The data come from the RNA Mapping Database (RMDB), library OK1LIB. This 177-nucleotide RNA was probed chemically with DMS and 2A3. 2A3 adducts were read by reverse transcription with SuperScript II with manganese.
RNA sequence: GGGAACGACUCGAGUAGAGUCGAAAAGAGUAACCAACAAUGUGAUCUUGCUUGCGGAGGCAAGACUUGCACAGUAUCAAAUCUGCAAGUGGUGCUAUUGUUGGAAAGAAUACUGUGAAGUCAACAACAUACCUCGACGGUUCGCCGUCGAGGUAUGAAAAGAAACAACAACAACAAC
Reactivity to DMS in 0.01 (KOAc 150mM, MgCl2 10mM, bicine 150mM(pH8.5), 24C), signal-to-noise 2, nucleotides 027 to 126: g000a300g000u010a130a260c020c000a050a000c000a010a010u000g060u030g050a160u060c050u040u120g050c000u000u000g000c010g020g010a050g000g000c300a070a070g010a030c000u020u010g060c050a000c060a020g000u000a000u000c170a050a240a180u000c000u000g020c030a000a000g020u000g020g010u000g040c030u020a010u000u010g000u000u000g020g010a010a070a070g000a100a010u010a020c000u030g000u030g030a000a040g040u030c080a180a150c160a030a220
Reactivity to 2A3 in 0.01 (KOAc 150mM, MgCl2 10mM, bicine 150mM(pH8.5), 24C), signal-to-noise 3, nucleotides 027 to 126: g080a010g080u170a010a040c000c000a000a010c010a070a000u100g050u050g220a060u210c030u150u200g000c000u000u000g000c050g000g050a030g120g020c080a070a040g010a040c000u020u140g000c010a000c000a030g000u000a020u170c070a050a080a120u010c000u000g010c060a010a050g020u070g150g110u080g130c000u080a000u020u000g000u000u000g000g000a020a000a000g020a040a060u070a050c000u000g000u010g100a020a000g080u000c020a050a030c020a040a040
The reactions ran in a buffer of 150 mM KOAc, 10 mM MgCl2 and 150 mM bicine (pH 8.5), at 24 C.
2A3 is a SHAPE reagent: it acylates the 2'-hydroxyl of flexible nucleotides of all four kinds.